[RMDB]
RNA sequence: GGGAACGACUCGAGUAGAGUCGAAAAAAAGACGCGGUUGCCGAUCGGUAUGGAUGCCACCGUGACGGCUCAAUCACACAAGUGCCAACGAUAACGAGGCGCUCGCUAUUGAUGCGUAACUGACGGCUAGAUACAGCCAGGUUCGCCUGGCUGUAAAGAGAGAACCGGUAUUCGUACCGGUUCUCUCAAAAGAAACAACAACAACAAC
Reactivity to 2A3 in 0.01 (KOAc 150mM, MgCl2 10mM, bicine 150mM(pH8.5), 24C), signal-to-noise 1, nucleotides 027 to 156: a000a000a000g040a000c000g000c000g060g000u070u070g000c010c030g150a060u100c010g000g070u050a030u130g040g060a080u120g000c000c100a050c010c020g040u010g120a160c050g020g010c000u000c030a050a060u140c010a030c080a080c050a210a040g000u000g040c020c000a070a040c110g060a050u110a150a040c070g000a030g010g030c030g030c010u010c010g070c020u030a040u060u190g070a040u180g000c010g060u060a000a040c000u050g010a010c020g010g040c010u010a060g000a100u030a050c000a000g000c000c000a010g010g030u100u100c090g000c050c000u000g000g000c000u000g000u000a010a010a010